The record gives the reactivity of an RNA of 177 nucleotides to 2A3 and DMS.
RNA sequence: GGGAACGACUCGAGUAGAGUCGAAAAUUCUGGGUGCUGUAAAGCACGGUGCCUAGCACCUCACAGGGACUCGGGGUGUCCUGGCUGACCAGCCGAAUCCACUUUUUAUUGACAAGAAGCCUGGGUCAUGUUAUCUAACCUUCGGGUUAGAUAACAUAAAAGAAACAACAACAACAAC
Reactivity to 2A3 in 0.01 (KOAc 150mM, MgCl2 10mM, bicine 150mM(pH8.5), 24C), signal-to-noise 2, nucleotides 027 to 126: u070u020c010u030g020g000g000u010g000c010u020g070u210a160a120a020g020c010a020c020g010g000u010g010c020c090u060a030g010c000a020c000c000u050c010a050c030a040g020g000g060a020c010u040c100g040g000g000g030u050g020u030c000c020u030g040g000c090u030g020a020c020c010a000g030c010c010g050a060a050u020c030c000a070c000u070u070u010u010u070a220u100u160g090a030c010a070a060g060a090a010g040c020c060u050g020g000g020u040c030
Reactivity to DMS in 0.01 (KOAc 150mM, MgCl2 10mM, bicine 150mM(pH8.5), 24C), signal-to-noise 5, nucleotides 027 to 126: u010u000c000u010g000g020g040u000g020c000u000g000u010a080a100a040g000c070a030c010g020g030u000g010c010c110u010a090g010c060a040c010c020u000c040a060c070a300g000g010g000a030c030u010c100g010g000g010g020u000g000u000c010c020u000g000g020c110u000g010a070c050c030a060g020c210c040g010a080a060u000c030c030a100c040u000u010u010u000u020a160u030u030g010a110c130a060a070g000a040a080g010c060c070u000g010g010g010u010c110

It was measured as part of the RMDB library OK2TRN. For DMS, 6,003 sequencing reads were counted. For DMS the reverse transcriptase was MarathonRT.